Structure probing data (DMS) for a 177-nucleotide construct. The reactions ran in a buffer of 150 mM KOAc, 10 mM MgCl2 and 150 mM bicine (pH 8.5), at 24 C. It was measured as part of the RMDB library TTRDES. DMS (dimethyl sulfate) methylates the pairing face of unpaired adenines and cytosines. DMS adducts were read by reverse transcription with MarathonRT.
[RMDB]
RNA sequence: GGGAACGACUCGAGUAGAGUCGAAAAAAAAGAUAUGGAUUCACAGAGCUUUGCCAGGCGCAGAUAGUUCCUCGGAAACGAGGAACUGUAGCCUGUGCAAAGCGACGAAGUGAAUCCUAAGUCAAAAUCGUAUAUAGACCUUCGGGUCUAUAUACGAAAAAGAAACAACAACAACAAC
Reactivity to DMS in 0.01 (KOAc 150mM, MgCl2 10mM, bicine 150mM(pH8.5), 24C), signal-to-noise 2, nucleotides 027 to 126: a060a060a090a120g000a060u000a300u000g010g000a050u000u000c000a010c000a070g000a300g020c000u030u000u000g010c030c020a010g020g030c020g040c300a140g010a060u000a040g010u000u000c010c000u010c010g000g000a080a100a250c000g000a010g020g010a000a020c010u000g010u000a120g010c030c000u000g000u040g020c020a000a000a000g000c010g010a040c230g020a070a090g000u000g010a000a000u010c000c000u000a020a100g010u000c040a090a180a070a090